[RMDB]
RNA sequence: GGGAACGACUCGAGUAGAGUCGAAAAGGCGACAUUAACGACGUGUGCCACCUCCGCCAGCGCUUUAUCUUCUCCACGAAGAACUCGGACACCUUCUGGAUCUCCGACCUGCUGGACGAGACGAAGCCAGACAAGACCGCCCCGGCGUACCGCGCCGGUUACGCCUGCUGUUCGCAGCAGGCGUAACAAAAGAAACAACAACAACAAC
Reactivity to 2A3 in 0.01 (KOAc 150mM, MgCl2 10mM, bicine 150mM(pH8.5), 24C), signal-to-noise 1, nucleotides 027 to 156: g030g030c070g000a090c060a070u120u110a180a140c100g100a020c070g120u150g020u030g000c020c010a010c010c010u000c010c030g000c030c000a020g060c010g060c170u080u140u170a110u100c070u050u010c040u050c110c050a050c140g050a050a000g000a060a060c010u010c020g070g000a070c050a120c050c040u270u150c080u260g150g000a120u040c020u010c010c000g050a080c000c010u140g000c040u010g010g030a090c040g000a030g000a010c020g000a000a000g060c020c000a040g000a050c050a050a110g050a020c010c010g020c010c000c010c000g050g040c020g000u060a100c000c160g030c000g020c000c000g000